[RMDB]
RNA sequence: GGGAACGACUCGAGUAGAGUCGAAAAUUUAUCACCAUCGCCAAUCUGAUGAGCAUCCUGCAGGCGGUAUCGGUCGUCGCCAUUCUCGGCGCCGGCGUCACCGUCACGCUCGCCGUCGGCGGUUUCGACCUGUCGAUCGGCGCCGUUGCCGCAUCGAAACUGCUUAGAGAUUCGUCUCUAAGCAGUUAAAAGAAACAACAACAACAAC
Reactivity to DMS in 0.01 (KOAc 150mM, MgCl2 10mM, bicine 150mM(pH8.5), 24C), signal-to-noise 1, nucleotides 027 to 156: u000u000u000a050u010c040a070c030c010a050u000c040g030c010c030a140a190u010c040u000g010a050u000g000a200g000c030a120u010c030c020u030g050c130a100g000g000c020g040g040u000a050u000c030g070g020u010c010g060u000c020g010c010c000a200u000u020c110u000c080g050g020c020g030c060c010g000g010c000g010u000c070a080c020c000g000u000c050a090c030g030c030u000c090g050c000c010g010u010c030g030g010c000g020g050u000u000u000c130g000a050c060c010u000g040u000c040g000a020u000c020g070g000c000g030c010c040g000u000u000g010c000c060g020c030a210u000c030g010a150
Reactivity to 2A3 in 0.01 (KOAc 150mM, MgCl2 10mM, bicine 150mM(pH8.5), 24C), signal-to-noise 2, nucleotides 027 to 156: u100u060u030a110u080c030a020c100c000a080u120c060g040c090c000a020a130u100c090u070g020a050u020g030a040g020c010a030u040c000c060u080g000c040a060g030g000c010g000g000u040a050u040c120g090g070u050c000g000u000c000g050c000c010a070u220u110c070u060c190g020g000c010g010c040c010g010g000c000g010u030c060a080c020c000g070u070c020a000c070g030c000u050c050g010c020c000g010u000c010g000g000c050g010g040u080u080u070c120g020a050c010c010u120g010u030c010g020a100u040c070g020g000c000g010c000c010g030u020u100g010c010c000g190c040a050u120c030g070a100
An RNA of 207 nucleotides, treated with DMS and 2A3 and read out base by base.
As a SHAPE reagent, 2A3 marks flexible, mostly unpaired nucleotides at the ribose 2'-OH.
2A3 adducts were read by reverse transcription with SuperScript II with manganese.
Conditions: 150 mM KOAc, 10 mM MgCl2 and 150 mM bicine (pH 8.5), 24 C.